Record summary: An RNA of 177 nucleotides, treated with 2A3 and read out base by base. Reactivities are given for positions 27 through 126. 2A3 adducts were read by reverse transcription with SuperScript II with manganese.
RNA sequence: GGGAACGACUCGAGUAGAGUCGAAAACAUUGCAGCUUCGGCUGCAAUGAAUCUCUGGUCUCUACGACUCUACUCGAUAGAGGCUGGUGUAGUCGUUCCCGAUGGCGCCCCAAUUCGUUGGGGCGAAGUCCUAUAACCCAUUCGUGGGUUAUAGGACAAAAGAAACAACAACAACAAC
Reactivity to 2A3 in 0.01 (KOAc 150mM, MgCl2 10mM, bicine 150mM(pH8.5), 24C), signal-to-noise 2, nucleotides 027 to 126: c000a010u000u000g000c020a020g000c000u030u120c230g220g000c000u000g030c000a010a000u000g010a000a040u020c070u030c060u150g060g060u000c020u000c010u070a070c040g010a000c000u000c000u000a000c010u000c000g010a000u000a000g020a010g000g010c040u080g000g270u170g040u100a030g000u000c000g000u010u010c000c010c000g000a040u030g080g090c000g000c000c000c010c000a000a010u070u050c190g070u060u020g000g010g000g000c000g000a010a020